[RMDB]
RNA sequence: GGGAACGACUCGAGUAGAGUCGAAAAGCAACCACCUUCGGGUGGUUGCAAAUGACGAUGCACGAUGACGAAGACGAAGAUGCUGUAGACGACGACGAACAAAAAGACCCACGUUCGCGUGGGUCAACGGAUACUAACACUUCGGUGUUAGUAUCCGAAAAGAAACAACAACAACAAC
Reactivity to 2A3 in 0.01 (KOAc 150mM, MgCl2 10mM, bicine 150mM(pH8.5), 24C), signal-to-noise 1, nucleotides 027 to 126: g000c010a010a000c000c000a000c030c000u020u070c140g130g020g010u010g000g020u000u010g000c000a020a020a000u050g020a020c030g010a000u030g030c010a020c050g030a020u090g060a010c010g060a080a020g040a020c050g050a040a020g020a070u090g010c030u020g010u030a010g030a080c040g000a000c010g010a020c040g020a110a000c030a080a110a030a000a020g010a000c000c000c000a000c010g000u010u040c160g010c000g080u000g000g020g000u000c000a000a000
Reactivity to DMS in 0.01 (KOAc 150mM, MgCl2 10mM, bicine 150mM(pH8.5), 24C), signal-to-noise 2, nucleotides 027 to 126: g010c000a000a010c010c000a000c000c000u010u020c170g000g010g040u000g000g000u000u020g000c030a000a030a020u010g000a050c040g000a120u000g000c020a050c060g060a070u000g000a090c080g000a060a080g030a060c080g030a040a060g000a020u020g000c050u000g010u000a070g000a070c060g010a070c090g020a040c050g000a060a060c100a060a050a080a090a070g000a010c000c010c000a000c000g010u010u000c200g030c000g020u000g020g000g000u000c000a010a050
Record summary:
Structure probing data (2A3 and DMS) for a 177-nucleotide construct. Values cover nucleotides 27 to 126. For DMS, 1,323 sequencing reads were counted. 2A3 adducts were read by reverse transcription with SuperScript II with manganese. Conditions: 150 mM KOAc, 10 mM MgCl2 and 150 mM bicine (pH 8.5), 24 C.